[RMDB]
RNA sequence: GGGAACGACUCGAGUAGAGUCGAAAAUCUUUGGCUUUCGAGCCAAAGAGUGGGUGCAAUGUGCUUUAAGCACCAAACACGGAAAAACCGUGAAAGGACAAAAAAAUCACAGUUUCGACUGUGAUAACGGGGAUACCUAAUUCGUUAGGUAUCCCCGAAAAGAAACAACAACAACAAC
Reactivity to 2A3 in 0.01 (KOAc 150mM, MgCl2 10mM, bicine 150mM(pH8.5), 24C), signal-to-noise 1, nucleotides 027 to 126: u000c030u030u000u010g020g000c000u070u120u110c190g090a010g010c010c000a000a000a000g000a010g000u070g150g010g000u040g010c010a040a170u120g000u050g090c030u050u070u150a090a020g010c000a000c000c010a000a060a000c000a000c000g030g020a070a220a060a040a020c000c010g000u020g040a110a020a010g120g000a000c020a000a150a030a030a000a000a010u010c010a000c010a000g000u010u060u120c220g100a010c000u000g000u000g000a010u000a000a000
Reactivity to DMS in 0.01 (KOAc 150mM, MgCl2 10mM, bicine 150mM(pH8.5), 24C), signal-to-noise 1, nucleotides 027 to 126: u030c010u000u000u000g010g010c000u000u000u000c130g020a000g020c030c000a000a000a000g000a040g010u000g000g010g030u000g010c040a150a170u020g000u000g000c110u020u000u000a110a210g000c000a010c000c100a060a050a240c000a020c000g000g040a130a110a080a180a230c000c000g010u000g020a010a110a020g000g000a030c140a000a000a020a040a060a050a050u010c000a000c020a000g020u000u000u000c200g020a010c010u000g010u010g000a000u000a010a140

An RNA of 177 nucleotides, treated with 2A3 and DMS and read out base by base. The RNA was probed in 150 mM KOAc, 10 mM MgCl2 and 150 mM bicine (pH 8.5) at 24 C. Values are in units of 0.01, from 0 to 300, in steps of 10.